[RMDB]
RNA sequence: GGGAACGACUCGAGUAGAGUCGAAAAUGAGAUAGAAAACAGCAUGAAGAAUGAUGAUGGUGUUUUAGCAUGUGGAAACUCCUGCAAGGCCACAAUGAGGCACUAAUGGUCAAGGGGCCACCAGAAGGUAGAUAUGGGUGUUCGCACCCAUAUCUACAAAAGAAACAACAACAACAAC
Reactivity to DMS in 0.01 (KOAc 150mM, MgCl2 10mM, bicine 150mM(pH8.5), 24C), signal-to-noise 1, nucleotides 027 to 126: u010g000a100g000a080u000a060g010a090a040a070a070c090a070g000c090a020u000g010a150a110g000a070a070u010g000a100u000g020a060u000g040g010u010g000u000u020u010u000a060g040c070a060u010g040u000g000g010a150a060a070c060u000c060c050u010g010c080a040a170g000g000c050c030a020c160a100a030u000g010a030g000g020c040a130c080u000a050a100u010g010g010u000c020a030a050g000g010g000g010c050c040a030c060c030a040g000a100a090g000
Reactivity to 2A3 in 0.01 (KOAc 150mM, MgCl2 10mM, bicine 150mM(pH8.5), 24C), signal-to-noise 1, nucleotides 027 to 126: u130g020a030g050a070u130a060g150a000a100a010a000c040a040g010c020a040u050g030a060a090g040a160a110u120g030a000u030g000a030u030g060g060u000g050u030u040u000u020a080g060c050a070u050g050u000g020g130a160a020a000c050u040c050c010u060g000c060a080a100g110g020c000c070a020c020a000a090u100g030a060g140g000c020a000c110u080a190a000u060g040g020u000c020a010a000g010g000g060g000c000c000a010c020c030a000g040a160a000g270
Chemical mapping of a 177-nucleotide RNA with DMS and 2A3. It was measured as part of the RMDB library OK2TRN.